The record gives the reactivity of an RNA of 177 nucleotides to DMS and 2A3. 2A3 adducts were read by reverse transcription with SuperScript II with manganese. Source: RMDB library OK2TST, as collected in RNAgym. The reactions ran in a buffer of 150 mM KOAc, 10 mM MgCl2 and 150 mM bicine (pH 8.5), at 24 C.
[RMDB]
RNA sequence: GGGAACGACUCGAGUAGAGUCGAAAAAAAAAGUUGUUACCUUCCUAAAAAGUAACAAUAUCAAGAAGAGUGAUUUAGCAGCAGCCUAUGGUCUCAAUCGUCAAGAGGUCACUAACAUUCUUAGUGGUAGAUAAACAAUGUUCGCAUUGUUUAUCUAAAAAGAAACAACAACAACAAC
Reactivity to DMS in 0.01 (KOAc 150mM, MgCl2 10mM, bicine 150mM(pH8.5), 24C), signal-to-noise 6, nucleotides 027 to 126: a040a020a030a050a080g000u000u010g010u000u000a020c020c060u000u000c060c050u010a070a050a040a060a050g010u000a010a010c010a020a050u000a060u010c070a050a070g000a070a040g000a060g010u010g010a090u000u000u010a040g000c070a050g020c080a070g020c040c020u000a060u010g010g000u000c020u000c090a060a070u010c140g000u020c100a050a090g000a070g010g000u000c030a030c030u000a020a030c100a090u010u010c040u000u010a040g010u000g010g010
Reactivity to 2A3 in 0.01 (KOAc 150mM, MgCl2 10mM, bicine 150mM(pH8.5), 24C), signal-to-noise 4, nucleotides 027 to 126: a000a000a000a000a000g010u010u010g000u000u000a010c010c000u040u050c030c010u080a130a120a030a020a020g000u000a000a000c010a000a000u080a040u140c070a040a040g060a080a010g050a100g060u040g050a130u040u080u090a030g020c050a000g020c010a000g000c020c000u100a090u080g030g020u020c010u000c040a060a110u060c050g110u040c050a050a050g040a030g110g010u020c010a000c010u020a040a010c030a110u120u080c010u010u040a030g010u040g100g060